Record summary
Chemical mapping of a 177-nucleotide RNA with DMS. The data come from the RNA Mapping Database (RMDB), library OK2TRN. The RNA was probed in 150 mM KOAc, 10 mM MgCl2 and 150 mM bicine (pH 8.5) at 24 C. DMS adducts were read by reverse transcription with MarathonRT. The DMS profile rests on 771 reads.
RNA sequence: GGGAACGACUCGAGUAGAGUCGAAAAACAUGACCGAAAAUCCCGAAGCUGACAAAGAGAUACGAAGAGAAUCUGACGUUAUUUGGUUAAGUUAGAAAGGGCGCACGGUGGAUGCCUUGGCACUAGGCGCCCUCGACUGAUUCGUCAGUCGAGGGCGAAAAGAAACAACAACAACAAC
Reactivity to DMS in 0.01 (KOAc 150mM, MgCl2 10mM, bicine 150mM(pH8.5), 24C), signal-to-noise 1, nucleotides 027 to 126: a110c110a110u000g010a060c000c040g000a020a090a070a160u000c010c000c040g030a190a070g020c040u000g030a110c100a110a070a050g000a090g040a050u000a030c080g040a110a050g000a110g000a040a060u000c010u000g010a050c050g010u000u010a060u010u000u010g020g030u040u000a100a130g000u000u000a020g020a040a100a140g020g020g000c040g050c070a020c020g000g030u000g010g010a030u000g000c060c040u000u000g000g000c050a020c040u040a150g000g000